[RMDB]
RNA sequence: GGGAACGACUCGAGUAGAGUCGAAAAUGAGAAGUCGUCAGUAGUUCGACGUGAGCAGAAGCCCGCCUCGAUAUGCUAUGUGGACGAGGGCAUGCCCAAGAGACACCUUAACCCUAGCGGGACGCAAGCCUGUGUAAAGGUUCGCCUUUACACAGGCAAAAGAAACAACAACAACAAC
Reactivity to DMS in 0.01 (KOAc 150mM, MgCl2 10mM, bicine 150mM(pH8.5), 24C), signal-to-noise 2, nucleotides 027 to 126: u000g000a090g000a110a190g000u000c010g010u010c020a070g010u000a050g010u000u000c020g030a080c120g010u000g000a090g000c010a120g010a130a130g000c010c000c030g000c040c030u000c010g000a090u000a090u010g000c040u010a010u000g010u010g000g000a020c050g020a090g020g000g020c070a100u000g000c010c000c000a040a050g000a140g020a060c060a060c040c040u000u020a060a120c020c030c020u010a090g010c100g020g000g000a100c140g000c100a090a110
Reactivity to 2A3 in 0.01 (KOAc 150mM, MgCl2 10mM, bicine 150mM(pH8.5), 24C), signal-to-noise 2, nucleotides 027 to 126: u190g000a030g040a220a010g160u050c010g010u000c030a020g070u070a000g020u110u080c050g010a020c050g030u050g060a050g040c020a010g040a300a000g070c000c000c000g030c000c010u020c010g040a040u020a040u230g040c050u020a080u200g300u090g230g000a020c060g020a050g010g010g040c030a030u060g020c000c000c030a000a050g130a020g010a020c020a040c040c010u060u070a050a070c000c000c000u010a020g010c050g030g010g000a020c040g020c060a060a010